[RMDB]
Source: RMDB library OK1LIB, as collected in RNAgym.
Structure probing data (2A3 and DMS) for a 177-nucleotide construct.
The 2A3 profile rests on 97,496 reads.
RNA sequence: GGGAACGACUCGAGUAGAGUCGAAAAGCUCGUCCACUCCGAUCGACCCACUAGGAGCUAUCGGAACUCUUAGCGGAGUGACCAAAUCUCUCGACUUCAGUUGGACAUCGUGAGAUCGAGGUCCAAAGACGUUGGAUGCCUUCGGGUAUCUAACGUCAAAAGAAACAACAACAACAAC
Reactivity to 2A3 in 0.01 (KOAc 150mM, MgCl2 10mM, bicine 150mM(pH8.5), 24C), signal-to-noise 9, nucleotides 027 to 126: g030c010u020c040g040u040c040c020a020c010u000c010c010g040a100u080c040g050a090c000c000c000a010c010u010a020g020g000a010g010c010u100a120u160c060g060g060a040a020c000u000c000u010u010a010g030c010g020g010a020g010u030g010a010c000c020a020a060a060u030c030u000c000u020c030g050a050c030u080u050c080a120g030u090u080g050g010a010c000a030u010c000g010u020g060a050g000a030u080c020g030a030g010g020u000c000c010a020a030a030
Reactivity to DMS in 0.01 (KOAc 150mM, MgCl2 10mM, bicine 150mM(pH8.5), 24C), signal-to-noise 9, nucleotides 027 to 126: g020c050u020c040g010u030c070c030a040c020u010c020c010g000a130u020c130g010a120c010c010c030a300c040u010a020g000g010a020g010c080u010a100u040c170g010g040a120a160c010u010c000u000u000a040g000c070g010g000a030g010u000g010a080c050c060a090a070a050u010c020u000c010u010c010g000a060c130u010u020c060a100g020u010u010g010g000a050c190a120u000c010g000u000g000a090g000a050u010c040g010a100g000g000u000c020c070a040a070a060
The DMS profile rests on 27,537 reads. The reactions ran in a buffer of 150 mM KOAc, 10 mM MgCl2 and 150 mM bicine (pH 8.5), at 24 C. 2A3 adducts were read by reverse transcription with SuperScript II with manganese.